[RMDB]
RNA sequence: GGGAACGACUCGAGUAGAGUCGAAAAUCAACGUUUCGACGUUGACUCUUGGGGUCUUCGUAACUCUAGUUGUCAGCUCUGAAGCCUCCACGGAGCUUGGAUUUAUUGUAGAGGAGAAGAAGACGGAGGCACCCUGCCAGUUUCGUUCGCGAAACAAGGAAUAGACGCAAUUCGUUGCGUCUAUUCCAAAAGAAACAACAACAACAAC
Reactivity to 2A3 in 0.01 (KOAc 150mM, MgCl2 10mM, bicine 150mM(pH8.5), 24C), signal-to-noise 2, nucleotides 027 to 156: u070c000a010a000c000g000u000u120u250c280g200a070c000g020u000u010g030a030c010u030c030u180u160g150g000g000g000u010c010u000u000c020g080u060a120a100c000u000c040u060a120g280u060u110g060u160c000a000g000c000u000c000u030g070a130a040g030c000c010u020c000c020a000c000g000g010a000g000c060u130u120g080g020a090u170u240u140a130u200u300g290u150a020g000a010g080g040a050g020a040a070g030a010a000g010a030c040g000g000a000g000g040c000a020c040c000c020u090g040c020c090a060g000u000u000u010c020g000u020u120c160g000c040g040a000a020a020c010a060a080
Source: RMDB library RNAMAK, as collected in RNAgym. The record gives the reactivity of an RNA of 207 nucleotides to 2A3. 2A3 adducts were read by reverse transcription with SuperScript II with manganese. 2A3 is a SHAPE reagent: it acylates the 2'-hydroxyl of flexible nucleotides of all four kinds.